Source: RMDB library OK2TRN, as collected in RNAgym. Chemical mapping of a 177-nucleotide RNA with DMS and 2A3. The 2A3 profile rests on 1,818 reads. The reactions ran in a buffer of 150 mM KOAc, 10 mM MgCl2 and 150 mM bicine (pH 8.5), at 24 C.
RNA sequence: GGGAACGACUCGAGUAGAGUCGAAAAUAGCUCCUUUAGGCAUCACUCCUCUUGGGACACAGAUCAAAUCACCUGGCAUGAUCUGGGACAGCGACAUCUUGGGGACAGAGAUGGGCCAGGAAGGAGGAUCAGGCAUAAACUUCGGUUUAUGCCUGAUAAAAGAAACAACAACAACAAC
Reactivity to DMS in 0.01 (KOAc 150mM, MgCl2 10mM, bicine 150mM(pH8.5), 24C), signal-to-noise 3, nucleotides 027 to 126: u010a190g000c010u000c000c010u000u000u020a170g010g000c040a020u010c010a180c170u000c010c000u000c000u010u010g000g000g000a160c210a100c020a010g000a020u000c010a040a060a140u000c080a110c020c030u010g010g030c030a190u010g000a010u000c010u000g000g000g000a120c120a090g040c160g000a090c110a080u000c010u000u000g010g000g020g010a060c240a100g000a110g000a050u000g000g020g010c000c010a020g000g000a150a020g000g030a020g000g010
Reactivity to 2A3 in 0.01 (KOAc 150mM, MgCl2 10mM, bicine 150mM(pH8.5), 24C), signal-to-noise 2, nucleotides 027 to 126: u060a030g030c010u050c000c000u070u060u040a300g260g100c010a020u000c000a000c070u020c010c010u010c010u050u080g050g010g030a010c060a000c010a160g040a010u010c010a050a110a050u050c010a040c040c020u010g020g000c020a030u040g000a020u060c030u000g000g010g010a060c070a070g050c070g090a020c020a120u040c020u020u010g000g000g010g000a010c060a040g250a010g020a040u010g000g010g030c010c000a000g000g040a010a000g000g000a010g010g020